[RMDB]
RNA sequence: GGGAACGACUCGAGUAGAGUCGAAAACAUUUGGAGUGUAACUCAUCAGUCACGGCACUAUACGUGGCAAUAGAUUAUAACAACAAGUCUGGCCCAAUAAAUGUGACCCUAAGUCCUCAGGUACGCACAGUUACUUAGCUUUCGAGCUAAGUAACUGAAAAGAAACAACAACAACAAC
Reactivity to DMS in 0.01 (KOAc 150mM, MgCl2 10mM, bicine 150mM(pH8.5), 24C), signal-to-noise 5, nucleotides 027 to 126: c080a050u010u030u030g000g010a260g000u010g000u000a030a050c110u000c140a030u010c150a150g010u000c010a040c020g000g010c180a130c150u050a090u010a050c030g010u010g010g000c010a100a060u020a060g000a080u000u020a030u000a090a060c090a030a190c060a060a050g010u010c050u000g000g000c000c000c020a130a060u010a020a060a060u020g020u010g000a100c030c000c020u000a030a070g000u000c000c020u020c080a070g010g000u000a050c070g010c140a210
Reactivity to 2A3 in 0.01 (KOAc 150mM, MgCl2 10mM, bicine 150mM(pH8.5), 24C), signal-to-noise 8, nucleotides 027 to 126: c040a060u060u060u100g110g020a080g020u050g020u050a060a050c020u020c040a050u050c060a040g030u000c010a010c010g020g050c130a040c200u160a140u110a230c040g000u030g000g010c010a010a040u080a040g010a050u040u090a040u110a270a040c050a020a000c010a030a040g050u000c050u060g060g010c010c020c000a030a040u180a050a050a040u120g040u100g040a080c000c010c020u030a080a040g050u070c000c030u050c020a010g040g030u090a040c040g010c030a040